[RMDB]
RNA sequence: GGGAACGACUCGAGUAGAGUCGAAAAGAGCUGUAGUACAGCAAGAAGCACGCGAUCCUUGGCACCGCGUGCAAGAGAAUUAAGCCGGCAAAGAAGGAAAGCCGGCAUAAGUGCCAAGUAAGAGAGAGACUCGGAUCAGGUUCGCCUGAUCCGAGUCAAAAGAAACAACAACAACAAC
Reactivity to 2A3 in 0.01 (KOAc 150mM, MgCl2 10mM, bicine 150mM(pH8.5), 24C), signal-to-noise 1, nucleotides 027 to 126: g150a020g000c000u000g000u210a040g070u040a020c010a000g030c000a000a120g000a080a040g000c000a000c000g020c000g000a070u070c020c010u000u000g000g090c000a000c000c000g030c000g000u000g000c000a000a000g050a000g050a070a080u090u120a090a120g000c000c000g000g020c140a290a220a120g110a140a000g210g060a210a110a000g000c000c120g000g020c000a000u000a000a000g000u000g000c010c140a000a000g000u000a000a090g040a020g020a020g000a000